[RMDB]
RNA sequence: GGGAACGACUCGAGUAGAGUCGAAAAUCAAGACCAGCCAGGGCAACAUGAUGAGACCCUGUCUCUGCCAAAAAAUUUUUUAAACUAUUAGCCUGGCGUGGUAGCGCACGCCUGUGGUCCCAGCUGCAGCGUUAUGAUACUUCGGUAUCAUAACGCUAAAAGAAACAACAACAACAAC
Reactivity to 2A3 in 0.01 (KOAc 150mM, MgCl2 10mM, bicine 150mM(pH8.5), 24C), signal-to-noise 1, nucleotides 027 to 126: u080c020a120a000g080a050c040c010a010g020c000c000a010g010g010g070c010a130a050c020a170u230g020a040u070g050a130g060a080c110c110c050u020g040u000c060u010c000u020g010c040c000a000a010a050a050a020a060u140u080u030u100u090u170a130a190a020c010u030a090u240u180a080g040c000c020u000g000g010c010g020u000g020g000u010a040g040c040g000c000a010c000g000c000c010u010g010u010g040g050u000c000c020c010a020g010c010u080g060c040
Reactivity to DMS in 0.01 (KOAc 150mM, MgCl2 10mM, bicine 150mM(pH8.5), 24C), signal-to-noise 2, nucleotides 027 to 126: u010c090a100a100g000a140c070c160a050g020c070c010a050g010g030g020c050a080a070c160a100u000g040a120u000g010a050g000a110c020c060c080u020g010u000c000u010c050u000g010c020c080a000a020a050a100a040a000u010u010u000u010u010u020a040a060a090c060u000a070u010u000a100g010c020c000u000g000g000c000g020u000g030g010u000a030g000c150g000c010a020c040g010c030c020u010g000u000g040g010u000c020c000c000a100g020c040u000g000c200

Chemical mapping of a 177-nucleotide RNA with 2A3 and DMS. The reactions ran in a buffer of 150 mM KOAc, 10 mM MgCl2 and 150 mM bicine (pH 8.5), at 24 C. DMS adducts were read by reverse transcription with MarathonRT. The 2A3 profile rests on 1,000 reads. The DMS profile rests on 1,171 reads.